[RMDB]
RNA sequence: GGGAACGACUCGAGUAGAGUCGAAAACAGUACACUCGGUUUAUUCAACGGCGAUAUUGGUAUUGCUUUGCCUGAUCCUGAAGGGGAGCUGCGGGUGCAUUUCCAAUUACCAGACGGCAAUAUCAAAAUUAGUAUGGUAGUUCGCUACCAUACUAAUAAAAGAAACAACAACAACAAC
Reactivity to 2A3 in 0.01 (KOAc 150mM, MgCl2 10mM, bicine 150mM(pH8.5), 24C), signal-to-noise 5, nucleotides 027 to 126: c020a030g070u120a020c040a010c020u030c030g050g080u100u120u130a180u170u140c040a060a050c040g030g010c030g040a050u040a090u190u090g020g000u020a020u020u030g010c000u070u060u090g010c000c010u060g020a060u020c000c020u040g060a090a030g050g020g010g000a030g030c020u040g030c020g010g040g010u050g000c010a010u040u030u000c010c010a020a050u090u070a100c050c030a030g010a060c040g010g000c000a000a020u030a020u060c010a010a020a080
Reactivity to DMS in 0.01 (KOAc 150mM, MgCl2 10mM, bicine 150mM(pH8.5), 24C), signal-to-noise 6, nucleotides 027 to 126: c140a080g010u010a050c040a050c030u000c020g010g000u010u010u000a080u020u000c070a050a090c130g000g010c050g010a090u010a090u010u000g010g010u000a020u000u000g000c010u000u010u010g010c010c010u000g010a140u000c040c020u000g010a160a090g000g000g010g010a070g010c070u000g010c050g010g000g020u000g000c040a070u000u000u000c020c020a060a090u000u000a090c130c030a050g010a040c070g000g000c020a020a030u000a030u000c030a030a050a110
Source: RMDB library OK2TST, as collected in RNAgym. An RNA of 177 nucleotides, treated with 2A3 and DMS and read out base by base. The RNA was probed in 150 mM KOAc, 10 mM MgCl2 and 150 mM bicine (pH 8.5) at 24 C. 2A3 adducts were read by reverse transcription with SuperScript II with manganese. DMS (dimethyl sulfate) methylates the pairing face of unpaired adenines and cytosines.